[RMDB]
The data come from the RNA Mapping Database (RMDB), library OK3TST. This 207-nucleotide RNA was probed chemically with 2A3. As a SHAPE reagent, 2A3 marks flexible, mostly unpaired nucleotides at the ribose 2'-OH. Conditions: 150 mM KOAc, 10 mM MgCl2 and 150 mM bicine (pH 8.5), 24 C. The 2A3 profile rests on 1,796 reads.
RNA sequence: GGGAACGACUCGAGUAGAGUCGAAAAGCCGCAAAGUGCCGAGGGAUGUCCUUGUAGUCCAGGUCCACCUUCCGCUCCCGCAGGGCCUCCUCGGCCACGGCGUUGAGCUUGUAGCUGGGCAGCUUGAGCUUCUCCACGGCCGUGCGGUACAUGUCCAGGGUACCGAAUUAUUCGUAAUUCGGUACCCAAAAGAAACAACAACAACAAC
Reactivity to 2A3 in 0.01 (KOAc 150mM, MgCl2 10mM, bicine 150mM(pH8.5), 24C), signal-to-noise 3, nucleotides 027 to 156: g000c000c000g000c020a050a120a060g160u190g060c020c010g000a080g000g000g000a010u010g110u210c010c010u020u010g030u080a110g000u000c000c020a020g030g050u110c120c080a120c030c040u130u060c080c040g000c000u010c010c030c000g000c000a010g020g000g020c000c010u090c030c050u180c130g000g020c010c000a020c010g050g000c020g020u050u220g010a010g000c010u040u130g070u050a040g070c010u000g000g000g050c030a050g000c010u010u000g020a030g010c010u050u030c090u000c030c040a140c020g000g000c000c000g010u000g000c010g020g000u040a040c040a070u150g010u000c020c020a020